[RMDB]
RNA sequence: GGGAACGACUCGAGUAGAGUCGAAAAUAAGGAGUUUUGCCACACCCGUCAACAUGUGGAUACUCCCGAGCGACAACUGGCUGGACCUGGCAUGGGGCUGCCAGUAUGACCUGAUUCUGGGCUACAGCGUGGACAAGGACUUCGGUCCUUGUCCACGAAAAGAAACAACAACAACAAC
Reactivity to 2A3 in 0.01 (KOAc 150mM, MgCl2 10mM, bicine 150mM(pH8.5), 24C), signal-to-noise 2, nucleotides 027 to 126: u120a040a080g000g050a070g000u080u070u100u260g280c030c000a020c040a010c010c080c000g110u110c030a070a080c000a280u170g000u040g020g000a020u030a000c010u020c000c020c040g080a120g070c020g060a090c020a130a010c010u010g010g060c060u080g040g080a270c000c030u060g170g130c190a260u210g070g010g000g020c000u010g000c010c000a000g000u000a020u060g030a070c000c000u000g000a040u040u040c010u040g060g020g060c010u140a070c080a010g030
Reactivity to DMS in 0.01 (KOAc 150mM, MgCl2 10mM, bicine 150mM(pH8.5), 24C), signal-to-noise 1, nucleotides 027 to 126: u000a180a090g000g000a050g010u000u000u000u010g020c000c000a020c000a130c060c040c030g010u000c130a050a070c200a120u020g020u000g000g000a120u010a040c030u000c000c010c070g020a100g050c050g010a170c150a100a030c010u030g000g000c010u000g010g000a130c040c040u000g020g030c210a130u000g010g010g000g040c070u000g030c000c000a010g040u000a090u000g000a090c010c000u000g000a060u000u000c030u010g030g000g000c010u000a100c080a030g000

This 177-nucleotide RNA was probed chemically with 2A3 and DMS.
Reactivities are given for positions 27 through 126.
For DMS the reverse transcriptase was MarathonRT.
The RNA was probed in 150 mM KOAc, 10 mM MgCl2 and 150 mM bicine (pH 8.5) at 24 C.
The data come from the RNA Mapping Database (RMDB), library OK2TST.